Conditions: 150 mM KOAc, 10 mM MgCl2 and 150 mM bicine (pH 8.5), 24 C. Structure probing data (2A3) for a 207-nucleotide construct.
[RMDB]
RNA sequence: GGGAACGACUCGAGUAGAGUCGAAAAUGAGACAAACACGCUUCACAAUGUGCGGCAAAGAGACAUUGUUUAUGCAAAGGCACUUCGCAAUGUGUGCUCAAACAUUGCUUAUUCAAACACGCUUCACAAAAGAAUCAGUGGUUCGCCACUGAUUCAACAGCUCUCUUCGGUUCGCCGAAGAGAGCUGAAAAGAAACAACAACAACAAC
Reactivity to 2A3 in 0.01 (KOAc 150mM, MgCl2 10mM, bicine 150mM(pH8.5), 24C), signal-to-noise 1, nucleotides 027 to 156: u080g000a010g050a000c130a000a050a010c130a040c170g050c000u090u080c030a050c050a010a010u020g020u060g110c080g010g000c120a040a060a060g080a060g000a000c010a010u000u020g020u070u210u100a120u150g000c030a070a100a020g130g000c010a000c050u020u000c000g020c010a000a000u020g000u000g010u000g000c030u180c210a020a040a000c000a000u020u020g000c000u050u030a110u180u100c120a030a030a030c060a080c190g130c090u140u090c020a080c020a140a160a000a000g020a000a000u000c000a020g000u000g010g060u040u020c130g050c010c000a000c000u020g000a000u000u000c000a000a000